About this RNA: Conditions: 150 mM KOAc, 10 mM MgCl2 and 150 mM bicine (pH 8.5), 24 C. An RNA of 177 nucleotides, treated with 2A3 and DMS and read out base by base. Values cover nucleotides 27 to 126. For 2A3, 1,118 sequencing reads were counted.
RNA sequence: GGGAACGACUCGAGUAGAGUCGAAAAUAUUUUUGGUAUGCAAAAGGAGGAACUGAAUGUUAGCACAUUGGAGCUCAGCAACCAAACUCCAAUUCUGCUGGAGGCCAAAUCUCAUAGGCAGUCAUAGCCAAUCCUACUCAUUCGUGAGUAGGAUUGGAAAAGAAACAACAACAACAAC
Reactivity to 2A3 in 0.01 (KOAc 150mM, MgCl2 10mM, bicine 150mM(pH8.5), 24C), signal-to-noise 1, nucleotides 027 to 126: u070a040u000u090u030u020u070g040g000u090a150u110g010c010a040a110a030a040g190g000a030g000g040a100a000c030u110g010a090a070u060g010u090u110a030g070c050a020c000a040u050u070g060g040a010g000c000u020c080a040g000c000a020a070c030c000a010a010a000c010u000c010c000a020a110u050u050c010u010g000c010u010g050g030a010g000g020c000c020a000a040a180u050c040u000c040a120u100a060g010g100c010a020g060u030c040a110u080a110g000
Reactivity to DMS in 0.01 (KOAc 150mM, MgCl2 10mM, bicine 150mM(pH8.5), 24C), signal-to-noise 2, nucleotides 027 to 126: u010a090u020u020u000u000u000g020g010u000a030u020g000c050a060a060a100a140g010g010a080g010g000a070a070c050u010g040a040a080u000g000u000u000a040g020c120a070c120a060u000u000g020g000a050g000c030u020c110a050g010c050a060a050c040c030a050a060a180c080u020c000c010a030a110u010u000c060u000g010c020u000g000g020a070g000g010c090c090a010a060a060u000c000u010c060a070u000a100g020g000c000a040g000u010c180a050u000a080g020